[RMDB]
RNA sequence: GGGAACGACUCGAGUAGAGUCGAAAACUGCGCUGCAAUACGUGUUCUCGGAACUGCCAGAAGACGAAGUGACCCCUGACGCUCUCAUCCUUGACGAGGCCGUUCAAGCCUGGAAAGCCAUGGUCGAGGUAGCGAGUUAGUUCGCUAACUCGCUACCAAAAGAAACAACAACAACAAC
Reactivity to 2A3 in 0.01 (KOAc 150mM, MgCl2 10mM, bicine 150mM(pH8.5), 24C), signal-to-noise 1, nucleotides 027 to 126: c000u020g000c000g010c070u060g020c070a060a070u070a220c090g030u080g050u210u080c060u000c000g000g110a200a140c100u120g000c030c010a060g000a210a030g080a020c050g030a100a060g060u090g110a110c000c010c000c000u050g000a000c020g010c020u000c030u000c010a140u120c040c060u050u070g040a000c040g050a040g040g110c050c010g040u030u020c040a050a000g000c000c000u000g050g070a130a050a000g060c000c010a070u110g030g000u050c030g010a020
Reactivity to DMS in 0.01 (KOAc 150mM, MgCl2 10mM, bicine 150mM(pH8.5), 24C), signal-to-noise 2, nucleotides 027 to 126: c040u000g010c040g030c020u000g020c040a100a000u020a060c080g030u000g000u010u000c030u000c060g000g020a100a070c060u010g020c060c030a060g000a120a070g010a080c030g000a110a110g020u000g010a080c060c000c000c060u020g000a110c040g000c020u040c060u000c050a080u000c050c080u000u010g010a080c040g000a100g030g000c080c000g020u000u000c070a060a050g000c000c000u030g030g010a050a080a120g070c040c060a110u000g030g000u000c060g020a090
Conditions: 150 mM KOAc, 10 mM MgCl2 and 150 mM bicine (pH 8.5), 24 C. Chemical mapping of a 177-nucleotide RNA with 2A3 and DMS. For 2A3 the reverse transcriptase was SuperScript II with manganese. The DMS profile rests on 1,114 reads. The 2A3 profile rests on 973 reads.